Source: RMDB library OK1LIB, as collected in RNAgym. Chemical mapping of a 177-nucleotide RNA with 2A3 and DMS. For 2A3 the reverse transcriptase was SuperScript II with manganese. The 2A3 profile rests on 1,525 reads. The reactions ran in a buffer of 150 mM KOAc, 10 mM MgCl2 and 150 mM bicine (pH 8.5), at 24 C.
[RMDB]
RNA sequence: GGGAACGACUCGAGUAGAGUCGAAAAGGUGCUGCCGAUGCUGCUGGCGAGCAAUUCCCAGCGAUUGCAGCCGCUUAAGCCGACCAGGGGGUGCUCCGCGCCGACCGACCGAUUCCGUGCCGCGGUGCUACGGGGGCACGUUCGCGUGCCCCCGUAGAAAAGAAACAACAACAACAAC
Reactivity to 2A3 in 0.01 (KOAc 150mM, MgCl2 10mM, bicine 150mM(pH8.5), 24C), signal-to-noise 3, nucleotides 027 to 126: g060g010u140g020c000u000g010c030c050g020a050u110g030c060u060g020c030u020g030g010c170g050a030g060c110a160a070u120u010c010c010c000a000g010c040g070a070u020u110g010c000a000g010c010c010g010c050u170u050a080a020g040c020c000g020a020c040c040a040g000g000g020g000g050u080g020c010u020c050c020g010c050g000c010c010g010a050c000c020g040a060c010c020g050a040u140u060c020c040g070u080g010c010c030g050c000g070g000u010g010
Reactivity to DMS in 0.01 (KOAc 150mM, MgCl2 10mM, bicine 150mM(pH8.5), 24C), signal-to-noise 2, nucleotides 027 to 126: g000g020u050g010c010u020g020c030c070g000a020u050g060c090u010g000c030u000g020g010c170g010a070g040c170a050a090u070u000c080c000c000a030g040c130g010a030u000u020g010c000a150g030c000c060g120c060u010u000a120a110g000c040c050g000a050c070c060a100g020g000g000g000g000u000g030c060u010c040c060g030c000g010c010c000g020a060c150c020g000a080c020c030g010a220u000u020c000c020g000u040g010c050c060g020c010g010g000u000g020

Annotation
For DMS, 2,208 sequencing reads were counted.